[RMDB]
RNA sequence: GGGAACGACUCGAGUAGAGUCGAAAAAGGUCCUCCUGCACCAAUGCAGCACCGAUGAUCGUUGGACCCUGGUCGGGGGCUUGUACGAGUCUCUUGUUGACUGGGUCAUUUCCAAAGCCAACGCAGCCAUCGCCGCGCAGAUGGAGCGCGUCAUUGCUCUGUAGCGUAGUUUCGACUACGCUACAGAAAAAGAAACAACAACAACAAC
Reactivity to 2A3 in 0.01 (KOAc 150mM, MgCl2 10mM, bicine 150mM(pH8.5), 24C), signal-to-noise 1, nucleotides 027 to 156: a010g000g070u050c040c020u080c020c050u070g040c060a080c050c070a130a160u070g000c020a030g000c040a040c040c010g120a120u110g000a030u040c000g010u000u010g110g010a010c000c020c000u050g010g020u010c000g060g000g000g000g000c030u120u000g050u190a000c150g010a010g000u010c000u060c000u070u030g130u240u210g030a000c050u040g000g000g110u050c000a000u030u090u010c000c030a110a070a080g030c020c020a000a010c060g030c050a000g080c000c030a020u020c010g020c130c030g080c000g020c020a040g050a220u230g090g030a020g060c000g000c000g000u030c050a130u130u140g000c020
Structure probing data (2A3) for a 207-nucleotide construct. Conditions: 150 mM KOAc, 10 mM MgCl2 and 150 mM bicine (pH 8.5), 24 C. Source: RMDB library OK3TST, as collected in RNAgym. 2A3 adducts were read by reverse transcription with SuperScript II with manganese.